[RMDB]
RNA sequence: GGGAACGACUCGAGUAGAGUCGAAAACCGUAGGAACCUAGAGACGCGAAGAACUAUAGGUCACCCUACAUUCGAAAGAGUGUAGACAAGUCCUAUAGGGAGCGUCGAUUGGGUUCCUAAACGGAAACGGUAGAUUCGGUUCGCCGAAUCUACCGAACGUCAUUGCUAAGUUCGCUUAGCAAUGACGAAAAGAAACAACAACAACAAC
Reactivity to 2A3 in 0.01 (KOAc 150mM, MgCl2 10mM, bicine 150mM(pH8.5), 24C), signal-to-noise 3, nucleotides 027 to 156: c000c000g000u000a010g000g010a000a000c010c010u020a030g010a000g000a050c010g040c000g170a300a060g010a020a000c000u000a000u000a000g020g020u060c050a050c000c000c020u000a000c000a000u000u000c000g020a030a030a040g000a000g030u000g000u000a000g000a060c050a220a110g000u000c000c000u000a000u000a010g000g000g000a020g000c000g000u000c000g000a000u010u080g000g000g000u000u010c000c000u000a000a000a000c010g030g000a100a070a020c010g010g000u000a000g010a010u000u000c000g010g100u070u090c290g040c100c000g000a000a000u000c000u010a000c000c000g000a000a000
Reactivity to DMS in 0.01 (KOAc 150mM, MgCl2 10mM, bicine 150mM(pH8.5), 24C), signal-to-noise 2, nucleotides 027 to 156: c000c000g030u000a020g000g000a000a010c000c000u010a060g030a300g010a060c000g040c000g020a060a230g040a140a250c000u000a020u000a000g000g000u010c020a150c080c030c000u000a000c000a000u000u000c000g040a190a170a150g000a040g000u000g000u000a010g000a040c080a110a050g000u000c000c000u000a010u000a010g020g010g000a150g040c010g000u000c000g000a070u000u000g000g070g000u000u000c000c000u000a000a000a070c010g010g030a050a090a120c020g050g010u000a010g000a050u000u000c030g020g000u000u020c300g070c030c000g030a030a010u000c000u000a000c010c010g030a000a010